[RMDB]
RNA sequence: GGGAACGACUCGAGUAGAGUCGAAAAGAUAUGGACGUGUGUCCGAGAGCAACAGCUCGGAAACGAGACAUGCUCGGACCACGUCCUAAGUCAAAGGGUACGUGGGGGUUCGCCCCCACGUACCCAACAAUGAUUUAGCCUUCGGGCUAAAUCAUUGAAAAGAAACAACAACAACAAC
Reactivity to DMS in 0.01 (KOAc 150mM, MgCl2 10mM, bicine 150mM(pH8.5), 24C), signal-to-noise 2, nucleotides 027 to 126: g000a040u000a300u000g000g000a020c000g010u000g000u000g000u000c000c020g000a040g030a100g020c100a070a180c230a070g010c000u000c000g000g010a100a070a180c000g020a030g000a050c130a170u010g000c000u000c010g000g000a020c010c000a000c010g010u000c010c000u010a000a080g020u020c020a090a150a150g000g010g010u000a000c000g020u000g010g000g000g010g010u010u010c260g000c010c000c000c000c000a000c010g000u000a000c000c000c000a000a020